[RMDB]
RNA sequence: GGGAACGACUCGAGUAGAGUCGAAAAUCCUCUAUCUUCGGAUAGAGGAAAAGAGCUACCAGGUACCGCUAGCAAAGAAAAGGUACCAAGACGGAAACGUCAAAACGAAGGGGUUCGCCCCUUCGAACUGAACUGUUAUCUUCGGAUAACAGUUCAGAAAAGAAACAACAACAACAAC
Reactivity to DMS in 0.01 (KOAc 150mM, MgCl2 10mM, bicine 150mM(pH8.5), 24C), signal-to-noise 2, nucleotides 027 to 126: u000c000c000u010c000u000a010u000c000u000u010c170g030g010a010u000a000g020a000g010g000a000a010a060a100g010a210g010c050u000a090c070c040a100g010g020u000a000c000c000g040c260u000a030g000c090a090a070a110g010a050a020a080a110g000g010u000a010c010c010a110a050g000a020c010g000g000a090a050a140c000g020u000c020a100a060a060a190c000g000a000a020g000g000g020g010u000u000c230g000c000c000c000c000u000u000c000g000a060a130
Reactivity to 2A3 in 0.01 (KOAc 150mM, MgCl2 10mM, bicine 150mM(pH8.5), 24C), signal-to-noise 3, nucleotides 027 to 126: u000c010c000u020c000u000a000u000c000u020u030c100g060g010a010u010a000g000a030g000g000a030a030a010a020g040a020g010c030u050a040c040c050a040g000g000u010a000c010c010g020c120u080a020g060c110a180a090a050g100a040a140a030a020g020g020u010a000c010c000a000a020g000a000c010g000g020a060a030a010c010g020u000c000a030a020a000a050c010g000a000a000g010g010g000g020u040u060c180g150c020c010c000c030u000u000c000g000a030a010
An RNA of 177 nucleotides, treated with DMS and 2A3 and read out base by base. The DMS profile rests on 1,900 reads. 2A3 adducts were read by reverse transcription with SuperScript II with manganese. For DMS the reverse transcriptase was MarathonRT. The reactions ran in a buffer of 150 mM KOAc, 10 mM MgCl2 and 150 mM bicine (pH 8.5), at 24 C. The 2A3 profile rests on 5,826 reads.